[RMDB]
RNA sequence: GGGAACGACUCGAGUAGAGUCGAAAACACGAAAGUUGGCUAAUCCUGGUCGGACAUCAGGGGGUUAGUGCACUGGCAUAAGCCAACUUGGCGCUAAUAGAUACUAAUCGUAGCAUAGCUGAAUAAAAUACUACCCAGGAUUCGUCCUGGGUAGUAUAAAAGAAACAACAACAACAAC
Reactivity to DMS in 0.01 (KOAc 150mM, MgCl2 10mM, bicine 150mM(pH8.5), 24C), signal-to-noise 5, nucleotides 027 to 126: c080a120c200g000a080a030a010g020u000u000g010g000c010u000a130a120u020c000c000u010g000g000u000c210g000g020a300c090a020u000c000a020g000g000g000g000g010u010u010a080g010u000g020c030a170c160u010g010g010c020a090u010a120a100g000c000c000a010a020c040u010u000g000g010c110g000c040u010a020a030u010a090g040a070u000a060c110u000a070a070u000c080g010u010a010g000c040a080u010a030g010c020u010g000a090a070u030a050a070a060
Reactivity to 2A3 in 0.01 (KOAc 150mM, MgCl2 10mM, bicine 150mM(pH8.5), 24C), signal-to-noise 3, nucleotides 027 to 126: c080a010c040g050a030a070a030g010u000u000g000g000c050u060a010a090u020c000c030u030g020g020u060c110g060g050a110c010a050u010c020a060g060g000g000g000g060u040u080a040g000u050g030c030a020c230u110g090g000c000a000u010a160a000g000c000c000a000a000c000u010u000g040g000c020g000c040u050a060a020u080a240g020a020u080a100c070u180a160a080u060c070g030u030a020g030c030a100u050a040g020c060u030g050a150a080u150a190a080a000